RNA sequence: GGGAACGACUCGAGUAGAGUCGAAAAUACCGUCUUCUCCCCGACGGUUUCAAUCCAUAGCUUCACGUUGUGUAGCGUAGGUGGAAGGAAUCGUGUGGUGUAUAAACACCACAUAGUCUCUUAGGGGUCAAGCUGAUAAACUUCGGUUUAUCAGCAAUGCCAAUUAAUUCUUCGGAAUUAAUUGGCAAAAAGAAACAACAACAACAAC
Reactivity to DMS in 0.01 (KOAc 150mM, MgCl2 10mM, bicine 150mM(pH8.5), 24C), signal-to-noise 2, nucleotides 027 to 156: u000a050c020c010g010u000c020u010u000c030u000c000c000c000c090g000a040c030g030g000u000u000u000c050a090a180u000c010c010a130u000a230g020c040u000u000c040a020c040g030u000u010g040u020g010u000a060g020c020g030u000a080g010g030u000g000g010a100a150g000g010a030a050u000c030g020u000g020u010g010g050u010g030u000a150u000a180a220a170c020a010c010c010a020c000a020u000a000g010u000c030u000c020u000u000a160g050g030g000g010u000c060a060a150g020c000u000g000a000u000a000a010a010c000u000u000c300g030g020u010u000u000a000u000c000a010g020c000a000a020
Reactivity to 2A3 in 0.01 (KOAc 150mM, MgCl2 10mM, bicine 150mM(pH8.5), 24C), signal-to-noise 2, nucleotides 027 to 156: u040a000c000c000g020u010c030u200u020c030u080c010c000c000c000g000a000c020g000g000u010u020u030c050a030a060u010c000c010a060u040a110g000c000u070u100c020a020c040g300u300u300g020u120g030u040a020g020c030g070u070a090g010g120u020g010g020a080a080g050g070a070a030u090c090g000u020g000u000g000g020u030g030u020a080u120a270a240a020c000a000c010c010a000c000a000u020a010g030u000c010u000c010u110u220a040g000g000g010g000u030c050a080a040g010c000u000g000a010u000a000a000a010c010u030u030c150g080g000u010u000u000a000u000c000a000g000c000a000a000

Background:
The record gives the reactivity of an RNA of 207 nucleotides to DMS and 2A3. Source: RMDB library M2RFPK, as collected in RNAgym. Reactivities are given for positions 27 through 156. The 2A3 profile rests on 1,822 reads. 2A3 adducts were read by reverse transcription with SuperScript II with manganese. As a SHAPE reagent, 2A3 marks flexible, mostly unpaired nucleotides at the ribose 2'-OH. Conditions: 150 mM KOAc, 10 mM MgCl2 and 150 mM bicine (pH 8.5), 24 C. DMS adducts were read by reverse transcription with MarathonRT. DMS (dimethyl sulfate) methylates the pairing face of unpaired adenines and cytosines. For DMS, 4,798 sequencing reads were counted.